[RMDB]
RNA sequence: GGGAACGACUCGAGUAGAGUCGAAAACGCUGGGACGCCCAUUUCGAUGGCGAUAAGAUACUGAAGCGCGCACGGUAUCUUUUGACGCCAUGUGGGCCGUCCUGUGCUGAAGCGCGCACGGCAACCGAAAGGUGCGAAACCCUGGCUUCGGCCAGGGGGUCUAUUACUUGUUCGCAAGUAAUAGACCAAAAGAAACAACAACAACAAC
Reactivity to 2A3 in 0.01 (KOAc 150mM, MgCl2 10mM, bicine 150mM(pH8.5), 24C), signal-to-noise 6, nucleotides 027 to 156: c030g000c020u040g020g000g000a000c000g000c000c000c020a050u130u220u260c250g150a110u100g000g000c010g020a050u080a240a000g000a000u000a010c010u020g040a240a050g010c010g000c010g000c020a010c020g020g000u010a000u020c000u050u090u090u170g250a110c090g000c000c010a020u050g040u020g030g000g020c100c030g000u000c000c000u000g000u010g000c010u060g030a100a030g000c010g000c000g000c010a000c000g030g000c020a040a030c000c000g050a110a020a020g020g000u000g000c000g000a080a070a070c000c000c010u000g010g000c000u060u090c270g110g000c000c000a000g000g000g000
Reactivity to DMS in 0.01 (KOAc 150mM, MgCl2 10mM, bicine 150mM(pH8.5), 24C), signal-to-noise 1, nucleotides 027 to 156: c050g010c000u000g000g010g010a070c000g030c000c010c000a160u000u000u000c100g020a110u000g000g030c000g010a110u010a040a030g040a010u000a010c020u000g060a080a090g000c000g020c040g000c040a300c030g020g020u000a000u000c000u030u000u000u000g000a130c010g010c030c010a040u000g040u000g000g000g050c050c060g040u000c000c000u000g010u000g010c020u000g000a050a040g040c000g080c020g010c040a260c090g000g010c060a090a090c010c010g000a090a070a220g000g030u000g010c030g010a090a090a190c000c000c000u010g000g000c010u000u010c300g040g000c000c000a010g010g010g000